[RMDB]
Source information: The record gives the reactivity of an RNA of 177 nucleotides to DMS and 2A3. Values cover nucleotides 27 to 126. The reactions ran in a buffer of 150 mM KOAc, 10 mM MgCl2 and 150 mM bicine (pH 8.5), at 24 C.
RNA sequence: GGGAACGACUCGAGUAGAGUCGAAAAAUUUUUGUGAACUUGUCAUCGCUAUGAUGACUGGUAAAACGAUAUUGCCUUAUUCACAUCGUAAGAAUUCGUCCAGAUGACACUAUCUCCUUCCGGCUUUUAAUAGUUUGUCUUUCGAGACAAACUAUUAAAAAGAAACAACAACAACAAC
Reactivity to DMS in 0.01 (KOAc 150mM, MgCl2 10mM, bicine 150mM(pH8.5), 24C), signal-to-noise 2, nucleotides 027 to 126: a040u020u000u020u040u010g020u010g010a250a030c030u000u010g000u000c000a000u000c000g010c270u040a110u030g000a010u010g000a010c020u000g020g010u010a010a100a100a010c050g020a010u000a040u000u000g010c010c000u000u000a060u020u010c020a070c090a030u000c080g030u010a090a060g000a040a100u000u010c070g000u010c010c040a070g040a100u010g000a080c110a020c050u010a030u000c030u000c010c010u010u000c030c040g010g010c030u000u000u000
Reactivity to 2A3 in 0.01 (KOAc 150mM, MgCl2 10mM, bicine 150mM(pH8.5), 24C), signal-to-noise 7, nucleotides 027 to 126: a000u110u100u010u050u050g030u020g020a040a020c010u010u030g000u000c000a000u000c010g130c250u270a160u300g010a000u000g000a010c000u000g020g030u050a080a080a030a020c080g020a040u040a070u100u120g030c010c010u070u070a070u100u070c040a010c010a090u070c060g060u070a050a020g030a090a090u090u050c030g030u030c050c020a030g030a080u060g020a020c010a020c030u070a080u040c020u020c010c000u080u000c020c030g020g020c040u000u000u010